Chemical mapping of a 177-nucleotide RNA with DMS. For DMS the reverse transcriptase was MarathonRT. The RNA was probed in 150 mM KOAc, 10 mM MgCl2 and 150 mM bicine (pH 8.5) at 24 C. The data come from the RNA Mapping Database (RMDB), library OK2TST. Reactivities are rounded to 0.1 and cut off at 0 and 3.

RNA sequence: GGGAACGACUCGAGUAGAGUCGAAAAGAAAGAUUAUUCUAGUCGGUUUGGCUUGUAUCGCCAUCAUUUCUACCAUUAUCUACAGAAAAUGGCAAGCUAGACAAAGAGGUUUACAAAGAUUCUAAAAAUAUACCUGGUCAUUCGUGACCAGGUAUAUAAAAGAAACAACAACAACAAC
Reactivity to DMS in 0.01 (KOAc 150mM, MgCl2 10mM, bicine 150mM(pH8.5), 24C), signal-to-noise 1, nucleotides 027 to 126: g000a080a110a130g010a180u000u030a050u000u010c010u020a050g030u000c030g000g030u000u000u020g010g000c010u020u000g000u000a080u000c230g010c060c000a030u010c100a170u030u000u000c030u000a160c170c160a160u030u000a100u000c120u010a150c200a060g000a020a010a090a020u010g010g020c000a060a020g000c020u020a020g010a010c000a020a050a070g000a020g010g000u000u030u000a040c240a090a100a110g000a110u000u000c020u000a010a050a170a050